Structure probing data (DMS and 2A3) for a 177-nucleotide construct. The DMS profile rests on 22,404 reads. For 2A3, 32,864 sequencing reads were counted.
RNA sequence: GGGAACGACUCGAGUAGAGUCGAAAAGUCUCGCCGCCUGAACCUUUCGUCUCAACCUCUAUGCCGGGCAGGUGAGCAAAGUUUCAGGUGUGCGAGCGGAAAAGGCAACGUAGUUCGCUACGUUGCCGUUAUGAUAAUCCUUCGGGAUUAUCAUAACAAAAGAAACAACAACAACAAC
Reactivity to DMS in 0.01 (KOAc 150mM, MgCl2 10mM, bicine 150mM(pH8.5), 24C), signal-to-noise 8, nucleotides 027 to 126: g020u010c000u000c010g010c000c010g010c000c000u000g000a020a010c050c000u000u000u000c230g010u020c000u000c010a070a110c020c010u000c070u000a100u010g010c100c100g000g000g020c300a020g010g010u000g000a010g010c010a010a010a010g010u000u000u000c000a010g000g010u000g000u010g020c000g000a000g010c020g010g000a060a050a100a140g000g010c000a000a000c000g010u000a010g010u000u010c210g020c000u000a000c000g000u000u000g000c000c000
Reactivity to 2A3 in 0.01 (KOAc 150mM, MgCl2 10mM, bicine 150mM(pH8.5), 24C), signal-to-noise 9, nucleotides 027 to 126: g100u030c000u000c010g000c000c010g010c010c000u010g000a000a010c000c000u020u050u080c120g190u110c030u010c020a180a300c020c000u050c020u100a130u280g140c080c040g010g060g000c120a010g000g010u000g000a000g000c000a000a010a000g000u010u010u010c000a000g000g000u010g020u060g000c000g000a000g000c000g000g010a120a160a030a030g010g000c000a000a000c000g000u000a010g020u050u060c190g020c130u000a000c000g000u000u000g000c000c000